An RNA of 177 nucleotides, treated with DMS and 2A3 and read out base by base. For DMS, 3,474 sequencing reads were counted.

RNA sequence: GGGAACGACUCGAGUAGAGUCGAAAAAAAGAUAUGGACGGUAUCACUAGGUUCGAAGUAGCGAGGUACGUCGGAAACGACGUACUACCCACCGCUACGUAGUUAGUGAGUACCGUCCUAAGUCAAACAUCUAACACUCGUUCGCGAGUGUUAGAUGAAAAGAAACAACAACAACAAC
Reactivity to DMS in 0.01 (KOAc 150mM, MgCl2 10mM, bicine 150mM(pH8.5), 24C), signal-to-noise 3, nucleotides 027 to 126: a070a040a040g000a020u000a210u000g000g000a020c010g000g010u000a020u000c000a010c000u000a050g030g010u010u000c040g010a140a300g010u000a000g000c010g000a050g000g010u000a000c010g000u000c000g000g010a020a030a080c000g010a010c010g020u000a010c020u010a060c030c010c030a300c030c010g000c000u010a010c000g000u010a140g020u020u010a030g010u000g000a050g000u000a010c000c000g010u000c000c000u000a000a040g020u000c000a150a110a230
Reactivity to 2A3 in 0.01 (KOAc 150mM, MgCl2 10mM, bicine 150mM(pH8.5), 24C), signal-to-noise 2, nucleotides 027 to 126: a000a000a020g020a000u040a020u080g000g000a000c000g000g000u010a010u020c000a030c020u070a130g300g160u300u180c020g040a180a010g010u010a000g000c000g000a000g000g030u000a000c000g010u000c010g010g000a010a010a000c010g000a000c010g000u000a000c010u000a010c000c000c000a030c010c000g000c000u020a010c020g000u010a020g020u090u090a000g000u010g050a100g050u030a000c000c010g010u000c000c000u000a000a000g000u020c010a010a040a070